[RMDB]
RNA sequence: GGGAACGACUCGAGUAGAGUCGAAAACUAGAGCAUCACAGCUAGGAUCUAGUAUCGUACCCAUGAUGACGACAUGGUACCAUGAUCAUGCCAUGUAUCAUGCUAGACUAGGGAUCUGGAUCCAUCACUAGCAACAGCAUUUCGAUGCUGUUGCUAGAAAAGAAACAACAACAACAAC
Reactivity to DMS in 0.01 (KOAc 150mM, MgCl2 10mM, bicine 150mM(pH8.5), 24C), signal-to-noise 3, nucleotides 027 to 126: c030u000a040g010a070g030c040a030u000c160a040c150a150g010c000u010a100g020g000a020u000c010u000a020g010u010a050u000c050g010u000a120c150c070c050a060u030g000a040u010g000a160c200g020a070c010a010u010g010g030u000a020c090c070a090u010g010a030u000c100a140u000g020c130c120a040u000g010u000a040u000c010a030u010g000c070u000a050g000a080c110u020a110g010g000g000a080u000c010u010g000g000a060u000c010c020a160u000c160a130
Reactivity to 2A3 in 0.01 (KOAc 150mM, MgCl2 10mM, bicine 150mM(pH8.5), 24C), signal-to-noise 3, nucleotides 027 to 126: c040u030a050g000a010g080c020a040u140c050a040c040a070g030c030u040a080g010g030a020u000c010u010a010g050u150a050u080c050g060u100a050c040c000c000a050u050g030a050u100g050a030c120g030a030c010a040u000g020g000u020a040c080c010a100u080g040a080u170c050a050u150g170c040c000a040u070g010u010a010u030c010a000u050g010c020u070a040g050a170c020u120a100g050g010g040a010u000c000u030g000g020a010u000c010c040a020u050c020a030
Structure probing data (DMS and 2A3) for a 177-nucleotide construct. For DMS the reverse transcriptase was MarathonRT. As a SHAPE reagent, 2A3 marks flexible, mostly unpaired nucleotides at the ribose 2'-OH. The reactions ran in a buffer of 150 mM KOAc, 10 mM MgCl2 and 150 mM bicine (pH 8.5), at 24 C.